This 177-nucleotide RNA was probed chemically with DMS and 2A3. For DMS, 2,303 sequencing reads were counted. It was measured as part of the RMDB library M2PK50.
RNA sequence: GGGAACGACUCGAGUAGAGUCGAAAAGUACUGAGGUUCGCCUCAGUACAAAAGCAGAUCUGAGCCUGCGAGCUCUCUGCCUAACUAGGGUACGCAAUAAAAAAACGUGCAUGUUCGCAUGCACGAACAAUUAAGAACCCUUCGGGGUUCUUAAUUGAAAAGAAACAACAACAACAAC
Reactivity to DMS in 0.01 (KOAc 150mM, MgCl2 10mM, bicine 150mM(pH8.5), 24C), signal-to-noise 3, nucleotides 027 to 126: g000u000a000c000u020g010a010g000g010u000u020c250g030c000c000u010c020a000g030u000a020c000a020a060a100a140g000c010a020g000a070u010c160u000g010a040g010c010c030u010g030c170g010a190g000c000u000c000u000c000u000g010c010c040u000a080a120c100u000a090g000g020g000u000a070c080g020c110a140a080u040a010a000a050a030a070a060a140c010g040u000g000c010a000u000g020u000u040c190g030c010a010u010g010c000a000c020g000a050a070
Reactivity to 2A3 in 0.01 (KOAc 150mM, MgCl2 10mM, bicine 150mM(pH8.5), 24C), signal-to-noise 3, nucleotides 027 to 126: g010u010a000c000u000g000a010g010g030u020u120c200g130c010c000u010c000a000g000u000a000c000a010a030a000a000g020c000a000g020a060u100c110u160g010a010g010c020c060u240g120c120g040a050g010c000u010c010u010c010u010g000c010c000u080a090a060c040u050a080g120g010g080u120a040c090g040c120a090a110u260a250a140a010a010a000a010a040c000g000u000g000c000a010u000g020u020u060c190g020c110a000u000g000c010a010c010g020a010a000